[RMDB]
RNA sequence: GGGAACGACUCGAGUAGAGUCGAAAAGAUAUGGAGUCGUCGUGGACAUGAACGACAUCGGAAACGAUGUACAAGUUCAACAGCCACACGACUCCUAAGUCAAAACGUUCAUGUUCGCAUGAACGAACACUGUUUGUAUCUUCGGAUACAAACAGUGAAAAGAAACAACAACAACAAC
Reactivity to 2A3 in 0.01 (KOAc 150mM, MgCl2 10mM, bicine 150mM(pH8.5), 24C), signal-to-noise 7, nucleotides 027 to 126: g010a020u020a010u060g000g010a010g010u010c030g020u140c240g010u050g000g010a100c180a300u260g000a000a000c010g010a000c020a010u000c000g000g000a010a010a010c020g020a010u010g010u100a210c110a280a120g000u000u010c030a140a140c170a230g010c000c000a000c000a000c000g000a010c010u000c000c000u000a010a000g000u000c010a010a000a080a190c030g010u000u000c010a010u020g060u050u090c300g000c150a000u000g000a010a010c000g010a020a010
Reactivity to DMS in 0.01 (KOAc 150mM, MgCl2 10mM, bicine 150mM(pH8.5), 24C), signal-to-noise 5, nucleotides 027 to 126: g010a000u000a110u010g000g010a020g010u000c000g020u000c300g050u000g010g030a040c120a150u010g010a030a010c010g000a040c010a010u000c000g020g000a020a030a060c000g030a010u000g010u000a070c290a110a180g010u000u010c000a110a130c160a180g000c000c000a010c010a030c000g010a000c000u000c000c000u000a000a030g000u010c010a110a070a090a210c020g010u000u000c000a000u000g000u000u010c230g010c010a020u010g000a020a010c000g010a090a130